[RMDB]
RNA sequence: GGGAACGACUCGAGUAGAGUCGAAAACGUCUGCCUCCUGUUCAUGCCCAUGGGGAUGGUCGAGGGGUCAGAGUCGGCCCUGGAUAAAGACGCGGACGCGGCGGCAGAGAAUGCGGGAGGGUCGCGGCGUGCGAGAAGAGUUCGCUCUUCUCGCACGAAAAGAAACAACAACAACAAC
Reactivity to 2A3 in 0.01 (KOAc 150mM, MgCl2 10mM, bicine 150mM(pH8.5), 24C), signal-to-noise 2, nucleotides 027 to 126: c000g040u030c050u090g090c040c000u040c000c000u010g070u080u070c060a040u120g080c050c010c010a150u230g090g000g000g000a040u050g020g020u010c030g070a150g000g010g010g030u000c040a060g080a100g300u260c140g000g000c000c000c000u000g040g060a040u200a070a160a000g010a000c020g040c060g300g010a060c040g000c040g300g000c000g000g050c020a010g050a010g050a160a050u190g040c110g000g070g030a060g080g000g020u080c050g000c060g000g040
Reactivity to DMS in 0.01 (KOAc 150mM, MgCl2 10mM, bicine 150mM(pH8.5), 24C), signal-to-noise 2, nucleotides 027 to 126: c020g010u010c080u000g000c020c000u000c000c010u010g000u000u010c020a060u000g000c000c010c020a300u000g020g020g020g010a270u010g000g000u000c020g030a210g020g000g010g020u000c020a130g020a140g010u000c100g010g000c010c000c010u020g000g020a170u000a060a120a100g000a030c040g050c030g010g000a300c000g000c020g000g000c100g000g050c020a020g020a100g000a130a060u010g000c030g010g000g010a060g000g020g030u030c060g010c040g000g000